[RMDB]
RNA sequence: GGGAACGACUCGAGUAGAGUCGAAAACUGUUCGGGUGACAGGUACUGCGCCGUGCCGAUCACUGCUGCGGUCUGGGUCACGCUGUUGCCGCUGUCGGCAAUGGCGCGGGCGAUGCCGAAAUCCAUCGCUGGAAGAAUCGUUCGCGAUUCUUCCAGCAAAAGAAACAACAACAACAAC
Reactivity to 2A3 in 0.01 (KOAc 150mM, MgCl2 10mM, bicine 150mM(pH8.5), 24C), signal-to-noise 2, nucleotides 027 to 126: c020u050g010u120u030c060g000g000g010u030g070a040c000a020g030g060u050a080c000u000g000c000g000c000c010g000u020g000c000c020g020a060u100c040a020c060u090g030c050u070g000c010g040g010u080c070u110g100g060g000u160c050a020c100g040c030u080g030u120u060g000c000c070g000c100u070g060u070c010g000g000c000a040a130u100g000g000c000g000c020g010g010g000c020g030a030u150g000c010c000g020a040a010a020u000c010c000a070u090c090
Structure probing data (2A3) for a 177-nucleotide construct. 2A3 adducts were read by reverse transcription with SuperScript II with manganese. The RNA was probed in 150 mM KOAc, 10 mM MgCl2 and 150 mM bicine (pH 8.5) at 24 C. The data come from the RNA Mapping Database (RMDB), library OK1LIB.